[RMDB]
RNA sequence: GGGAACGACUCGAGUAGAGUCGAAAAGAUAUGGACGUUGACCACGAGAACUUUGUCAGGGAGUCGUACAGUCGGAAACGACUGACGACUUUGAUCUGACAAAGUUCUUAUCAAACGUCCUAAGUCACUAAGUGGUAGUGUUCGCACUACCACUUAGAAAAGAAACAACAACAACAAC
Reactivity to DMS in 0.01 (KOAc 150mM, MgCl2 10mM, bicine 150mM(pH8.5), 24C), signal-to-noise 3, nucleotides 027 to 126: g000a070u010a300u010g000g010a010c010g000u000u000g010a180c300c300a100c250g000a000g010a000a030c000u000u000u000g010u020c000a000g010g000g000a010g030u000c010g010u040a090c000a000g010u010c010g010g000a110a100a300c000g020a010c000u000g000a030c000g000a010c000u000u020u010g010a060u010c000u000g010a010c000a010a000a010g020u000u000c000u020u000a030u000c120a120a010a020c000g010u000c000c010u000a010a100g010u020c050a270
Chemical mapping of a 177-nucleotide RNA with DMS. DMS (dimethyl sulfate) methylates the pairing face of unpaired adenines and cytosines. The data come from the RNA Mapping Database (RMDB), library TTRINS. Conditions: 150 mM KOAc, 10 mM MgCl2 and 150 mM bicine (pH 8.5), 24 C.